[RMDB]
RNA sequence: GGGAACGACUCGAGUAGAGUCGAAAACUGGGUAGAGUGGCAUCUGGUUGGUGAUGCCCAUCUCAUAUCAGCCAGGGACAAAGCAACUCCUUGUUCAUCCCAGCUUGGCUUUUGAUCCGUGCCCAUGACCGCGUAUACUAUUCGUAGUAUACGCGGUAAAAGAAACAACAACAACAAC
Reactivity to DMS in 0.01 (KOAc 150mM, MgCl2 10mM, bicine 150mM(pH8.5), 24C), signal-to-noise 5, nucleotides 027 to 126: c050u000g010g000g010u000a100g000a030g010u010g000g000c010a020u010c000u000g010g010u010u000g000g000u010g000a020u010g000c060c010c110a030u020c040u000c030a080u010a050u010c070a030g020c060c010a060g000g000g000a060c100a070a060a080g000c060a050a090c180u010c110c080u000u010g000u000u000c180a140u000c000c010c000a130g010c120u030u000g000g000c020u000u000u000u010g010a040u010c080c070g010u010g000c010c000c020a100u030g010
Reactivity to 2A3 in 0.01 (KOAc 150mM, MgCl2 10mM, bicine 150mM(pH8.5), 24C), signal-to-noise 6, nucleotides 027 to 126: c020u030g010g020g060u090a070g010a030g030u110g010g000c010a010u000c010u050g140g000u070u020g040g020u090g040a020u010g020c000c010c000a080u030c010u010c010a060u060a060u080c040a010g020c020c000a020g000g000g000a010c050a040a170a000g040c030a020a070c040u100c050c050u070u070g010u080u070c030a060u040c010c000c000a020g040c080u060u080g000g000c000u070u060u020u110g050a050u030c020c030g020u060g010c000c000c000a030u080g050